RNA sequence: GGGAACGACUCGAGUAGAGUCGAAAAAGCACUGGUACGAUACGUCGUACCAGUGCAGUCGUUGGGAUCGAACGCAAUUAAAUACAUGUGUGACGUGUAUUUGCGAACGACGUAAUUAUUUUUCAAAAUCACGCUAUCGUGUUCGCACGAUAGCGAACUUUAUUAGUACCUUCGGGUACUAAUAAAGAAAAGAAACAACAACAACAAC
Reactivity to DMS in 0.01 (KOAc 150mM, MgCl2 10mM, bicine 150mM(pH8.5), 24C), signal-to-noise 2, nucleotides 027 to 156: a070g040c010a000c010u000g040g020u010a010c010g010a070u010a100c300g080u010c010g070u010a000c010c010a010g030u010g000c010a030g010u000c020g000u010u000g010g020g020a110u000c020g040a060a300c000g010c000a080a160u000u000a100a070a110u000a000c010a020u000g010u000g060u010g030a120c020g050u000g000u000a030u000u010u010g000c020g000a020a300c030g010a040c020g020u010a080a090u000u000a150u000u000u000u000u000c060a050a050a150a140u010c130a150c010g000c010u020a010u010c000g060u010g000u000u000c300g000c000a030c010g000a040u000a010g030c000g010a000a000
Reactivity to 2A3 in 0.01 (KOAc 150mM, MgCl2 10mM, bicine 150mM(pH8.5), 24C), signal-to-noise 3, nucleotides 027 to 156: a000g020c010a010c000u000g010g000u010a000c000g030a020u020a040c210g170u000c000g000u000a010c000c020a010g010u000g000c010a000g020u010c030g010u000u040g110g080g030a230u090c040g020a020a030c000g000c010a000a040u180u120a130a150a000u020a010c000a000u060g100u050g200u260g290a070c030g010u020g000u000a030u010u020u020g000c010g010a030a010c000g010a010c010g040u050a090a030u120u150a100u050u150u030u030u060c090a050a020a020a070u160c080a060c110g020c000u000a000u000c000g000u000g010u040u040c120g020c080a000c010g000a000u010a000g010c000g000a000a000

Structure probing data (DMS and 2A3) for a 207-nucleotide construct. It was measured as part of the RMDB library M2RFPK. For DMS the reverse transcriptase was MarathonRT. For DMS, 5,016 sequencing reads were counted. The reactions ran in a buffer of 150 mM KOAc, 10 mM MgCl2 and 150 mM bicine (pH 8.5), at 24 C.